[RMDB]
RNA sequence: GGGAACGACUCGAGUAGAGUCGAAAAGUGGCCAGAAAGGCGAGCGCCAAACCGCCCGCGACAGGUUUUGUCGCGGGAGAUGCAAGGGAUGUGCGUCUUGCCGGUGUGGCUGUCAUCUGCUGGUGGAAAAUUAUACGAUAUUCGUAUCGUAUAAUUUAAAAGAAACAACAACAACAAC
Reactivity to 2A3 in 0.01 (KOAc 150mM, MgCl2 10mM, bicine 150mM(pH8.5), 24C), signal-to-noise 8, nucleotides 027 to 126: g050u040g020g000c010c010a030g090a080a040a000g010g010c010g000a010g000c010g000c000c000a040a030a020c000c010g020c010c000c010g000c000g000a000c010a040g120g060u210u300u300u080g010u010c000g000c000g010g080g000a010g010a000u190g030c060a050a080g020g020g010a030u030g130u140g020c010g030u070c020u000u010g000c000c010g000g000u070g010u010g000g000c010u010g070u030c020a080u020c020u110g080c050u080g030g070u060g080g000a030
Reactivity to DMS in 0.01 (KOAc 150mM, MgCl2 10mM, bicine 150mM(pH8.5), 24C), signal-to-noise 9, nucleotides 027 to 126: g020u000g000g010c010c010a040g010a070a160a140g010g010c010g010a010g010c020g010c000c010a010a100a280c010c010g000c010c000c000g020c000g010a010c000a030g010g010u000u010u010u000g020u000c000g010c000g010g000g000a010g000a070u010g020c290a110a110g010g000g000a270u000g000u010g020c000g010u010c010u000u000g010c010c000g000g010u010g010u000g010g010c010u000g000u000c050a060u000c040u000g010c060u000g000g010u000g000g000a090

Chemical mapping of a 177-nucleotide RNA with 2A3 and DMS. The RNA was probed in 150 mM KOAc, 10 mM MgCl2 and 150 mM bicine (pH 8.5) at 24 C. DMS adducts were read by reverse transcription with MarathonRT. Source: RMDB library OK2TST, as collected in RNAgym. For 2A3 the reverse transcriptase was SuperScript II with manganese.